Description:
The record gives the reactivity of an RNA of 177 nucleotides to 2A3 and DMS. The RNA was probed in 150 mM KOAc, 10 mM MgCl2 and 150 mM bicine (pH 8.5) at 24 C. For 2A3 the reverse transcriptase was SuperScript II with manganese. Values are in units of 0.01, from 0 to 300, in steps of 10. High DMS reactivity at an A or C suggests that its Watson-Crick edge is free. For DMS the reverse transcriptase was MarathonRT.
RNA sequence: GGGAACGACUCGAGUAGAGUCGAAAAGGUAGGGCAUUCGUGCCCUACCACACCUCUAUGCAGAUUGGCGAGGACGACGUCGCGGCCCACGUUUACCAACAACUACUCUCUCCUUCGGGAGAGAGAACAGUAUAAGGGGGUUCGCCCCCUUAUACUGAAAAGAAACAACAACAACAAC
Reactivity to 2A3 in 0.01 (KOAc 150mM, MgCl2 10mM, bicine 150mM(pH8.5), 24C), signal-to-noise 6, nucleotides 027 to 126: g010g000u010a010g010g000g000c020a020u040u090c210g100u040g000c000c000c000u000a000c000c000a000c010a000c010c010u000c020u070a080u110g080c050a040g090a300u110u130g110g000c020g030a060g060g040a050c050g000a030c050g060u040c010g010c030g060g050c010c000c000a040c030g000u020u040u080a220c030c010a030a070c010a020a030c030u130a070c000u030c000u000c000u010c000c010u010u080c160g070g010g000a000g000a000g000a000g000a010a010
Reactivity to DMS in 0.01 (KOAc 150mM, MgCl2 10mM, bicine 150mM(pH8.5), 24C), signal-to-noise 5, nucleotides 027 to 126: g020g000u000a000g010g010g020c000a040u000u010c200g020u000g010c000c000c010u010a000c000c010a050c150a050c030c010u010c100u000a070u010g010c070a070g010a120u010u000g000g020c040g010a100g010g010a090c050g000a060c100g010u000c030g030c060g000g010c020c020c020a200c070g000u000u000u000a110c030c030a080a050c130a040a080c140u000a130c000u000c000u000c000u000c000c000u000u000c140g020g010g000a020g000a010g000a000g020a040a080